[RMDB]
RNA sequence: GGGAACGACUCGAGUAGAGUCGAAAAACGCUUCACAAUGUGCGGCAAAGAAACAUUGUUUAUGCAAAGGAACUUCGCAAUGUGUGCUCAAACAUUGCUUAUUCAAACACGCUUCACAAUGUGCGACAAAACUUCACGGUCUUCGGACCGUGAAGAACCUCUUGCACCUCUUCGGAGGUGCAAGAGGAAAAGAAACAACAACAACAAC
Reactivity to 2A3 in 0.01 (KOAc 150mM, MgCl2 10mM, bicine 150mM(pH8.5), 24C), signal-to-noise 2, nucleotides 027 to 156: a000c010g000c010u010u000c030a000c010a120a050u050g050u080g030c010g050g000c070a170a100a050g060a020a010a000c010a020u000u000g090u080u040u140a160u200g040c030a000a010a080g080g020a000a060c130u090u020c060g040c000a020a000u000g010u000g100u050g100c000u010c150a030a030a020c000a000u000u000g000c050u010u050a040u000u090c050a000a130a050c060a020c080g050c000u040u120c010a020c040a020a150u170g030u030g090c060g050a040c070a000a100a020a030c020u020u000c000a000c000g000g000u000c010u020u040c100g140g060a000c000c040g000u000g000a000a000g000a000a000
The data come from the RNA Mapping Database (RMDB), library M2RFPK. This 207-nucleotide RNA was probed chemically with 2A3. For 2A3 the reverse transcriptase was SuperScript II with manganese. For 2A3, 782 sequencing reads were counted. The RNA was probed in 150 mM KOAc, 10 mM MgCl2 and 150 mM bicine (pH 8.5) at 24 C.